Description: This 177-nucleotide RNA was probed chemically with 2A3.
RNA sequence: GGGAACGACUCGAGUAGAGUCGAAAAAGGGGAAGGCGGCACUUCCUGCAGGAUAACGCCAUUAAUUUGGAUUAAUAUUCCUUGUUCCAUGGAAUGGCACUUGGCAAUCACGACCGUCGCCGAAAUCGUCACCCAGCCCUUUCGAGGGCUGGGUGACAAAAGAAACAACAACAACAAC
Reactivity to 2A3 in 0.01 (KOAc 150mM, MgCl2 10mM, bicine 150mM(pH8.5), 24C), signal-to-noise 1, nucleotides 027 to 126: a020g060g000g040g060a070a070g080g000c030g030g000c020a050c060u010u000c000c030u030g010c000a000g000g000a050u110a130a050c030g000c000c000a000u040u040a000a150u060u100u090g030g000a030u130u000a000a110u080a200u120u060c040c140u140u090g000u080u010c000c000a000u050g050g090a000a000u000g010g000c000a000c010u060u000g060g000c160a240a000u190c190a030c190g060a060c000c000g060u060c000g040c040c000g000a160a000a000u160c090